[RMDB]
This 177-nucleotide RNA was probed chemically with DMS.
For DMS, 805 sequencing reads were counted.
RNA sequence: GGGAACGACUCGAGUAGAGUCGAAAACGAGGAGGGGCAUACAGACCUCACCCCUCAGAGACCUUCUGGGUCUUCCCAGGAGUUGCAAUUUAAUCUGUCACUGUGCCUCGUAGACAGUAGGUGCUCAACGAGAACAGGCAUUCGUGCCUGUUCUCGUAAAAGAAACAACAACAACAAC
Reactivity to DMS in 0.01 (KOAc 150mM, MgCl2 10mM, bicine 150mM(pH8.5), 24C), signal-to-noise 1, nucleotides 027 to 126: c160g000a070g040g000a090g000g010g000g010c060a080u000a110c150a160g000a060c060c010u000c110a170c080c010c000c060u000c000a100g020a220g010a120c020c000u000u020c110u010g010g020g000u000c080u000u020c000c000c000a090g040g000a060g000u020u030g000c100a070a120u010u000u000a220a100u000c000u010g000u000c020a060c030u020g000u000g010c050c010u000c100g010u000a060g010a040c040a030g010u000a150g000g030u000g000c050u000c050a110